[RMDB]
RNA sequence: GGGAACGACUCGAGUAGAGUCGAAAAUUAAUUGGGAGAUGGACCCUUUCAACUACUUUAGAAUCUUACAAGGUACUUUGAAUAUAGUAGUGAACGUGUGUUCAGAGUCUACUUAUGUCAUCAUCAACUCAGUGAUAGGAUUCGUCCUAUCACUGAGAAAAGAAACAACAACAACAAC
Reactivity to DMS in 0.01 (KOAc 150mM, MgCl2 10mM, bicine 150mM(pH8.5), 24C), signal-to-noise 4, nucleotides 027 to 126: u010u000a060a050u000u000g000g030g000a050g010a130u010g020g000a050c030c030c010u000u000u000c020a080a050c050u010a010c030u000u000u010a040g010a140a050u010c030u000u020a110c300a140a070g010g020u000a030c050u010u010u000g010a090a090u010a060u010a030g020u000a050g000u000g010a010a020c040g020u000g030u010g010u000u000c010a040g010a060g010u000c030u000a020c060u000u000a060u000g010u000c080a070u000c080a100u010c100a090a210
Reactivity to 2A3 in 0.01 (KOAc 150mM, MgCl2 10mM, bicine 150mM(pH8.5), 24C), signal-to-noise 3, nucleotides 027 to 126: u070u040a000a060u100u070g050g000g000a060g020a020u040g020g000a030c000c000c000u010u000u010c040a080a050c010u040a020c000u100u040u050a080g030a090a050u010c030u090u200a090c070a110a050g070g010u030a040c020u100u120u070g050a090a010u160a040u050a090g000u000a000g020u010g060a020a020c030g050u080g010u030g000u140u000c010a010g010a010g130u000c010u040a050c030u110u070a080u180g070u060c050a130u010c010a050u060c030a110a100